[RMDB]
RNA sequence: GGGAACGACUCGAGUAGAGUCGAAAAACAUGGAGGAGACAGAGCCCUGAUGUCCCAGCUGAGGACAUCCCAGAAAAGCCUAUUUCCAGACAACUGAGGACAGGUGAAUGAGUUCUUUGUAGAUGAACCAGAAUCCAGUCUAUCUACCUGCUGAGCACUCCAGUAGGUACUUCGGUACCUACUGGAGAAAAGAAACAACAACAACAAC
Reactivity to 2A3 in 0.01 (KOAc 150mM, MgCl2 10mM, bicine 150mM(pH8.5), 24C), signal-to-noise 1, nucleotides 027 to 156: a040c060a140u120g000g010a070g030g020a010g030a060c060a100g040a030g020c000c030c040u070g010a010u010g010u050c020c000c000a020g100c170u140g010a090g020g010a000c010a010u090c040c010c010a020g090a030a110a020a010g030c030c010u020a020u020u040u070c000c000a030g030a110c030a100a020c150u110g030a010g020g000a000c070a050g000g010u030g000a050a080u040g020a030g140u070u020c010u040u100u180g130u090a140g040a150u200g000a000a020c000c000a030g000a000a060u030c000c000a010g000u010c000u040a240u000c020u070a060c020c030u090g000c050u030g100a100g060c050a020
Chemical mapping of a 207-nucleotide RNA with 2A3.
The RNA was probed in 150 mM KOAc, 10 mM MgCl2 and 150 mM bicine (pH 8.5) at 24 C.
Reactivities are given for positions 27 through 156.
It was measured as part of the RMDB library OK3TST.
Values are in units of 0.01, from 0 to 300, in steps of 10.